Conditions: 150 mM KOAc, 10 mM MgCl2 and 150 mM bicine (pH 8.5), 24 C. The record gives the reactivity of an RNA of 177 nucleotides to 2A3 and DMS.
RNA sequence: GGGAACGACUCGAGUAGAGUCGAAAAUGUGUCGGAUCUGUCAUGACGAUCAGUACGAUCACAUGACUAGGACAUGCUAGCAUGUCGAUCUGUACGUACGAUCCUAGUCUAGCAUGCACCAUGGUGCGUUUAUUAGCUGUUUCGACAGCUAAUAAACAAAAGAAACAACAACAACAAC
Reactivity to 2A3 in 0.01 (KOAc 150mM, MgCl2 10mM, bicine 150mM(pH8.5), 24C), signal-to-noise 9, nucleotides 027 to 126: u130g040u010g030u030c030g030g020a110u030c030u070g020u030c030a050u090g120a140c120g010a030u040c020a030g180u170a060c110g000a020u060c010a000c000a020u020g030a050c030u060a050g050g040a040c030a040u060g000c010u020a010g010c020a020u030g030u110c060g010a010u000c030u110g090u130a070c100g040u060a020c060g020a010u000c000c000u020a040g030u020c010u020a010g020c020a040u070g010c030a080c050c020a080u170g110g000u070g030c050
Reactivity to DMS in 0.01 (KOAc 150mM, MgCl2 10mM, bicine 150mM(pH8.5), 24C), signal-to-noise 9, nucleotides 027 to 126: u000g020u000g010u000c030g010g010a080u000c040u000g010u000c020a060u010g010a140c190g010a010u000c020a170g010u010a130c170g000a020u000c010a110c010a000u000g000a050c010u000a060g010g010a180c070a030u000g000c010u000a030g010c020a090u000g000u000c140g010a020u000c010u010g030u000a050c190g020u010a050c180g000a050u000c000c030u000a120g010u010c030u000a050g010c040a060u000g000c050a070c020c040a090u010g020g010u000g010c090
For DMS, 62,063 sequencing reads were counted. It was measured as part of the RMDB library OK2TRN.